[RMDB]
RNA sequence: GGGAACGACUCGAGUAGAGUCGAAAAGAUAAGGAGUGCGUGAGGAAUCGACCAGAAUAAAUAGAUUCCAAGCACUCUGUAUCACGCCGUCACGUGCCGAAAUUCUGGUCAAAUUCGGAAUAACAAACGAUUGUAGUACCUUCGGGUACUACAAUCGAAAAGAAACAACAACAACAAC
Reactivity to DMS in 0.01 (KOAc 150mM, MgCl2 10mM, bicine 150mM(pH8.5), 24C), signal-to-noise 2, nucleotides 027 to 126: g000a020u020a080a110g000g000a000g020u010g020c000g030u060g020a240g070g000a000a000u000c000g010a030c130c040a070g000a170a060u050a070a080a090u070a150g010a020u000u010c000c000a050a170g040c030a000c020u030c000u000g000u020a030u000c010a070c140g010c000c000g000u050c020a030c100g020u020g000c000c000g020a010a080a080u050u000c000u000g040g010u000c030a040a160a120u020u010c010g000g010a150a080u000a030a080c170a080a040a150
Reactivity to 2A3 in 0.01 (KOAc 150mM, MgCl2 10mM, bicine 150mM(pH8.5), 24C), signal-to-noise 4, nucleotides 027 to 126: g040a010u080a020a130g060g000a000g000u000g000c040g050u140g170a170g040g020a030a000u000c010g000a000c010c010a020g100a090a070u190a180a130a000u100a040g000a000u000u000c000c000a020a000g000c000a000c010u000c000u000g010u000a020u040c060a040c140g030c020c000g110u150c020a050c190g080u100g100c040c000g000a040a020a030u150u010c000u010g000g040u020c020a020a020a110u050u000c000g020g060a070a090u120a160a040c130a110a030a000
The data come from the RNA Mapping Database (RMDB), library OK1LIB. Structure probing data (DMS and 2A3) for a 177-nucleotide construct. Values are in units of 0.01, from 0 to 300, in steps of 10. The RNA was probed in 150 mM KOAc, 10 mM MgCl2 and 150 mM bicine (pH 8.5) at 24 C. For 2A3 the reverse transcriptase was SuperScript II with manganese. In probing experiments dimethyl sulfate is read out at A N1 and C N3, which are open when not base-paired.